Background
The data come from the RNA Mapping Database (RMDB), library OK3TST. This 207-nucleotide RNA was probed chemically with 2A3. For 2A3 the reverse transcriptase was SuperScript II with manganese. The RNA was probed in 150 mM KOAc, 10 mM MgCl2 and 150 mM bicine (pH 8.5) at 24 C.
[RMDB]
RNA sequence: GGGAACGACUCGAGUAGAGUCGAAAAGAAAGAAAGAAAGAAAGGUAUGAAGUCCUAUUCACACGGGAUAGGAUAAACUUCAUAUUGAUCGUGUAUGUGCUAACGCACAUACACGAAUGCGCAUGCAGAACUGCAUGCAUGAACAUACCGUGUGCAAGGUGACUGCACCCUUCGGGGUGCAGUCACCAAAAGAAACAACAACAACAAC
Reactivity to 2A3 in 0.01 (KOAc 150mM, MgCl2 10mM, bicine 150mM(pH8.5), 24C), signal-to-noise 1, nucleotides 027 to 156: g080a030a060a000g060a040a050a000g040a020a050a050g060a110a070a000g000g010u010a000u000g000a000a000g000u000c000c000u000a000u000u000c020a000c000a000c000g010g000g000a000u000a000g020g020a010u090a110a080a060c000u000u040c020a000u000a020u050u060g040a060u040c000g000u000g010u000a010u000g020u000g010c090u210a130a000c250g000c000a000c010a000u000a020c010a000c000g000a000a000u070g060c020g020c000a000u010g020c010a000g080a300a060c090u070g000c000a000u000g010c000a000u100g020a000a020c040a080u180a120c000c000g000u000g000u010g030c050a160a070